[RMDB]
RNA sequence: GGGAACGACUCGAGUAGAGUCGAAAACGCGGAUACUUCGGUAUCCGCGAAAGAAGCGAAGGCGUACCGAAAUAAAACGGUAAUAAAUCGCAAAUCGCCUAAAAAGCCUAGACUUCGGUCUAGGCAACAAACUUACGAACUUCGGUUCGUAAGUUUGAAAAGAAACAACAACAACAAC
Reactivity to DMS in 0.01 (KOAc 150mM, MgCl2 10mM, bicine 150mM(pH8.5), 24C), signal-to-noise 2, nucleotides 027 to 126: c010g010c010g020g000a010u020a000c000u000u020c130g040g010u010a010u000c000c000g000c000g040a020a050a050g020a130a130g010c010g000a010a050g000g020c170g020u010a020c000c000g000a060a060a170u010a090a070a180a110c030g000g000u000a060a070u010a040a120a080u010c010g010c040a030a090a140u000c020g000c000c010u010a040a090a060a090a030g000c000c000u000a010g000a050c010u000u010c200g060g000u000c000u000a000g000g000c000a000a010
Reactivity to 2A3 in 0.01 (KOAc 150mM, MgCl2 10mM, bicine 150mM(pH8.5), 24C), signal-to-noise 1, nucleotides 027 to 126: c020g000c010g010g000a010u000a000c000u020u060c110g050g020u000a000u000c000c000g000c000g000a000a000a000g020a050a020g010c020g010a030a000g110g000c040g030u010a010c000c000g090a150a110a000u220a020a120a020a040c000g040g010u010a000a020u060a020a080a010u100c000g000c000a100a100a070u060c030g010c000c010u070a100a110a060a040a000g010c000c000u000a000g000a000c000u040u030c210g010g020u000c000u000a000g000g000c000a000a000

The record gives the reactivity of an RNA of 177 nucleotides to DMS and 2A3. DMS adducts were read by reverse transcription with MarathonRT. The RNA was probed in 150 mM KOAc, 10 mM MgCl2 and 150 mM bicine (pH 8.5) at 24 C. As a SHAPE reagent, 2A3 marks flexible, mostly unpaired nucleotides at the ribose 2'-OH. 2A3 adducts were read by reverse transcription with SuperScript II with manganese.